[RMDB]
RNA sequence: GGGAACGACUCGAGUAGAGUCGAAAAGAGAGAGAGAGACACGCCUGAAUGGCAGCAGCAGGCCUUAGCGGCAAUGGACAGCAGGCACAGGACCAGCUUUGCCUCGAGCCGCAACGCUGAUGCCAGAUAUACGUGUUCGAUUCGUCGAACACGUAUAAAAAGAAACAACAACAACAAC
Reactivity to 2A3 in 0.01 (KOAc 150mM, MgCl2 10mM, bicine 150mM(pH8.5), 24C), signal-to-noise 7, nucleotides 027 to 126: g090a000g010a000g000a000g000a000g000a000g030a000c030a020c050g060c010c010u080g100a150a070u040g000g000c000a010g000c010a000g000c010a020g070g070c050c050u080u130a040g000c000g020g000c020a030a100u130g050g030a030c030a040g050c040a010g020g000c020a030c030a120g060g090a130c030c010a020g050c000u050u050u160g020c000c000u020c030g020a020g010c000c000g000c010a020a020c040g010c000u010g000a010u000g000c000c000a000g020a010
Reactivity to DMS in 0.01 (KOAc 150mM, MgCl2 10mM, bicine 150mM(pH8.5), 24C), signal-to-noise 5, nucleotides 027 to 126: g020a080g000a030g000a060g000a060g010a090g000a090c090a070c120g020c030c020u000g010a110a080u000g000g000c020a040g000c010a020g010c010a160g010g010c110c100u020u000a130g020c000g000g030c010a110a100u030g000g000a070c150a070g000c050a010g000g000c020a170c120a100g020g000a080c060c070a100g010c000u000u000u030g010c000c000u000c150g020a210g010c010c000g020c010a070a050c160g000c000u000g020a030u000g010c000c010a060g010a130